[RMDB]
Structure probing data (DMS and 2A3) for a 207-nucleotide construct. Source: RMDB library M2RFPK, as collected in RNAgym. For DMS, 1,585 sequencing reads were counted. For 2A3, 1,343 sequencing reads were counted. DMS adducts were read by reverse transcription with MarathonRT.
RNA sequence: GGGAACGACUCGAGUAGAGUCGAAAACCCAGUUCCGGGGCCGUUCACUGGAUCCGAAGCCUCUAGAAGGAUAAUAUAGGCACUCCAUACCCUACUCCGACUCAAUACGUCCCCGUCGUACAGAAUGCAAGGGCAUCCCUGUUCGCAGGGAUGCCAACGUUCUUAUAGUCUUCGGACUAUAAGAACGAAAAGAAACAACAACAACAAC
Reactivity to DMS in 0.01 (KOAc 150mM, MgCl2 10mM, bicine 150mM(pH8.5), 24C), signal-to-noise 1, nucleotides 027 to 156: c010c000c010a150g000u000u000c070c030g150g010g000g020c020c020g020u000u000c100a110c100u030g030g000a090u020c010c040g010a130a110g000c050c060u000c000u000a140g010a210a100g020g010a200u000a080a080u010a110u020a050g000g020c010a110c050u010c010c030a250u000a050c120c000c030u000a050c090u000c050c040g020a090c000u000c020a090a100u000a050c030g030u000c000c020c020c020g000u000c020g030u000a300c070a110g020a100a200u000g000c000a140a150g000g050g020c010a030u000c020c010c040u000g000u010u040c260g010c000a010g000g020g000a010u020g010c010c000a010a020
Reactivity to 2A3 in 0.01 (KOAc 150mM, MgCl2 10mM, bicine 150mM(pH8.5), 24C), signal-to-noise 3, nucleotides 027 to 156: c010c010c010a020g020u050u060c050c020g010g000g000g020c030c000g010u070u090c090a070c170u060g010g030a020u050c050c000g040a040a020g020c020c000u060c070u120a100g040a150a040g120g010a060u030a250a100u130a070u060a060g030g000c040a030c060u060c040c010a060u090a130c000c010c010u040a050c030u020c020c010g070a030c010u030c130a050a080u040a110c010g020u000c000c000c000c010g020u080c000g020u050a060c030a040g070a210a070u140g080c040a030a060g030g010g000c000a010u010c030c000c010u020g020u040u060c130g020c070a010g000g000g040a000u010g010c000c000a000a000